An RNA of 207 nucleotides, treated with 2A3 and read out base by base. The RNA was probed in 150 mM KOAc, 10 mM MgCl2 and 150 mM bicine (pH 8.5) at 24 C. Reactivities are given for positions 27 through 156.
RNA sequence: GGGAACGACUCGAGUAGAGUCGAAAAACUCAUCAGGGACAGUACACACUGUCCGACGGCAGAGUCGUCGACACCUCUCCCCCCCCCAGGUACUAUCCCUUUUCAAGGAUGUGUUCCCUAGGGGGGUGGGUGUACCUCUUUUGGAUUGCUCCGGCCUCAUUCACAUACUGUUCGCAGUAUGUGAAUGAAAAGAAACAACAACAACAAC
Reactivity to 2A3 in 0.01 (KOAc 150mM, MgCl2 10mM, bicine 150mM(pH8.5), 24C), signal-to-noise 1, nucleotides 027 to 156: a000c070u090c100a120u050c110a100g000g000g130a010c030a030g050u170a160c110a020c040a040c150u000g020u000c020c010g010a030c020g000g030c050a040g010a000g000u020c000g010u010c020g060a040c010a040c030c030u060c060u060c060c000c000c000c000c000c000c000c010a000g000g030u010a000c000u000a010u000c010c000c000u080u200u100u300c080a020a010g010g000a010u000g050u010g000u220u060c030c000c000u060a050g030g000g000g000g000g000u080g010g000g030u000g020u020a050c030c020u140c040u240u090u100u150g130g000a040u000u120g040c030u030c020c080g080g000c020c000u000